[RMDB]
RNA sequence: GGGAACGACUCGAGUAGAGUCGAAAAGGUUAUCCGGCGGUCGACGCACGGUCAUGCACCCCCGAUCCGUCGCCCCCUCCACCCCGCGGAUUCCGGUCUCGACCGGUAGCCGUAUUGGGCGGGGACGCAGGUUUGUGUAAUUCGUUACACAAACCUGAAAAGAAACAACAACAACAAC
Reactivity to 2A3 in 0.01 (KOAc 150mM, MgCl2 10mM, bicine 150mM(pH8.5), 24C), signal-to-noise 7, nucleotides 027 to 126: g090g010u100u090a050u130c020c010g020g010c010g030g030u100c040g040a080c020g030c110a080c090g030g020u040c030a050u230g020c040a080c000c000c000c000c000g010a050u060c020c010g010u000c020g040c010c000c000c000c000u010c000c010a050c000c010c000c010g000c010g000g000a020u070u000c010c000g000g010u020c030u050c140g150a070c000c000g000g000u000a030g030c000c000g020u030a150u070u170g020g010g000c020g000g000g000g010a010c030g010
Reactivity to DMS in 0.01 (KOAc 150mM, MgCl2 10mM, bicine 150mM(pH8.5), 24C), signal-to-noise 5, nucleotides 027 to 126: g020g000u020u010a090u020c070c010g010g020c040g000g020u000c080g000a120c090g010c090a060c150g010g000u020c070a090u010g010c080a150c000c010c020c020c000g000a060u030c050c020g000u000c010g000c000c000c000c020c000u000c000c040a090c050c020c010c190g000c010g020g000a150u000u000c010c000g000g010u000c030u030c300g000a030c000c000g010g010u000a010g000c020c010g000u010a100u030u010g010g010g040c110g000g000g000g010a040c090g000
Chemical mapping of a 177-nucleotide RNA with 2A3 and DMS.
For 2A3 the reverse transcriptase was SuperScript II with manganese.
The RNA was probed in 150 mM KOAc, 10 mM MgCl2 and 150 mM bicine (pH 8.5) at 24 C.
Source: RMDB libraries RFM100 and RFMREP, as collected in RNAgym.
As a SHAPE reagent, 2A3 marks flexible, mostly unpaired nucleotides at the ribose 2'-OH.